[RMDB]
RNA sequence: GGGAACGACUCGAGUAGAGUCGAAAACGCCAGCGCGUCGCCAUUGCCCGCGCCAUCCUCAAAGACCCGCGCAUCCUGAUUCUGGACGAGGCGACCAGCGCGCUCGACAACGAGUCCGAGGCGCUGGCGUCGUCUGCUAUUUCGAUAGCAGACGACGAAAAGAAACAACAACAACAAC
Reactivity to 2A3 in 0.01 (KOAc 150mM, MgCl2 10mM, bicine 150mM(pH8.5), 24C), signal-to-noise 4, nucleotides 027 to 126: c030g030c020c040a040g000c050g010c000g080u070c030g040c060c010a140u090u250g040c020c020c000g040c010g010c010c020a060u030c000c000u090c050a120a090a050g090a110c030c000c000g010c010g010c040a030u040c000c000u110g060a240u180u120c070u110g030g030a040c050g040a060g020g020c030g040a090c020c010a030g020c000g000c040g130c030u010c000g000a030c020a270a140c110g120a070g050u030c090c030g010a000g010g000c010g000c000u000g000g000
Reactivity to DMS in 0.01 (KOAc 150mM, MgCl2 10mM, bicine 150mM(pH8.5), 24C), signal-to-noise 4, nucleotides 027 to 126: c100g000c030c030a030g020c050g020c040g000u000c040g010c030c080a100u000u010g010c020c050c030g020c060g010c040c040a080u010c020c020u010c100a080a100a130g000a080c050c030c030g010c080g010c040a090u000c030c020u000g010a120u000u000c060u010g010g010a090c060g010a080g000g020c030g010a170c020c040a040g000c040g010c050g020c020u000c010g000a050c070a140a120c150g000a120g020u010c080c010g000a050g010g000c000g010c010u000g000g000

Structure probing data (2A3 and DMS) for a 177-nucleotide construct.
Source: RMDB library OK2TRN, as collected in RNAgym.
For DMS the reverse transcriptase was MarathonRT.